[RMDB]
RNA sequence: GGGAACGACUCGAGUAGAGUCGAAAAACAAAGGGAGAAGAUGGCGGUGUGCUACAUCUUGAAUUUGAGUUUGAACCCCGCUAUACUACCAAUGUAGUCAAACGUGAAGCCGGGCUUGGAAAUUUAACAUACUAGCGAGGUUCGCCUCGCUAGUAUGAAAAGAAACAACAACAACAAC
Reactivity to 2A3 in 0.01 (KOAc 150mM, MgCl2 10mM, bicine 150mM(pH8.5), 24C), signal-to-noise 5, nucleotides 027 to 126: a000c060a040a030a010g060g050g010a120g020a280a010g030a030u040g030g000c010g000g040u030g060u110g060c020u040a060c010a100u040c010u020u110g110a200a160u110u070u140g070a070g030u070u050u100g060a040a030c000c000c010c000g000c020u060a060u040a110c030u030a040c040c040a050a070u150g020u030a040g060u090c030a080a050a080c060g050u060g110a020a000g020c040c000g010g000g080c030u030u060g090g060a030a100a070u170u120u030a110a050
Reactivity to DMS in 0.01 (KOAc 150mM, MgCl2 10mM, bicine 150mM(pH8.5), 24C), signal-to-noise 5, nucleotides 027 to 126: a080c030a050a050a170g000g000g000a070g010a100a050g010a050u000g010g000c020g000g000u010g010u020g020c040u000a070c050a030u020c040u010u000g010a100a080u020u030u020g010a080g000u010u010u020g000a180a080c040c020c010c020g000c030u000a050u000a050c040u010a050c010c090a030a200u010g010u010a050g010u010c070a050a080a120c090g010u010g010a110a160g030c030c050g000g000g010c050u000u020g010g010a070a040a110u040u010u020a050a160